An RNA of 177 nucleotides, treated with 2A3 and DMS and read out base by base. Conditions: 150 mM KOAc, 10 mM MgCl2 and 150 mM bicine (pH 8.5), 24 C.
[RMDB]
RNA sequence: GGGAACGACUCGAGUAGAGUCGAAAAGCCUAACAGUUCGCUGUUAGGCAAAUGCACAGACUUCGCAACUGAGAAAAACACAACAGAAGUGUCUAUGCGAGGAUCGUUGCGUCUUCGGACGCAACAACUUGCCAUCCAGAUUCGUCUGGAUGGCAAGAAAAGAAACAACAACAACAAC
Reactivity to 2A3 in 0.01 (KOAc 150mM, MgCl2 10mM, bicine 150mM(pH8.5), 24C), signal-to-noise 2, nucleotides 027 to 126: g020c010c000u030a030a000c020a020g030u060u070c150g040c150u000g010u000u010a000g000g000c000a000a020a030u110g000c030a050c020a100g070a010c010u020u010c010g000c010a080a130c090u180g000a050g080a170a080a050a080a010c060a010c050a120a160c100a190g130a300a030g140u010g000u000c030u080a040u050g000c010g030a010g000g030a180u140c170g000u000u020g000c010g000u000c000u020u010c150g070g000a000c000g000c000a000a000c000a000a020
Reactivity to DMS in 0.01 (KOAc 150mM, MgCl2 10mM, bicine 150mM(pH8.5), 24C), signal-to-noise 1, nucleotides 027 to 126: g030c000c020u000a000a000c000a020g000u000u000c100g050c000u000g000u020u020a000g010g020c000a000a030a050u000g000c140a120c110a120g010a140c000u000u000c010g000c130a040a180c090u000g020a090g020a060a150a100a090a040c030a020c020a040a080c140a180g000a060a130g000u000g000u000c030u000a170u020g000c000g000a060g000g000a100u000c080g000u000u000g050c030g010u000c000u010u000c090g030g000a000c000g010c000a000a000c010a020a090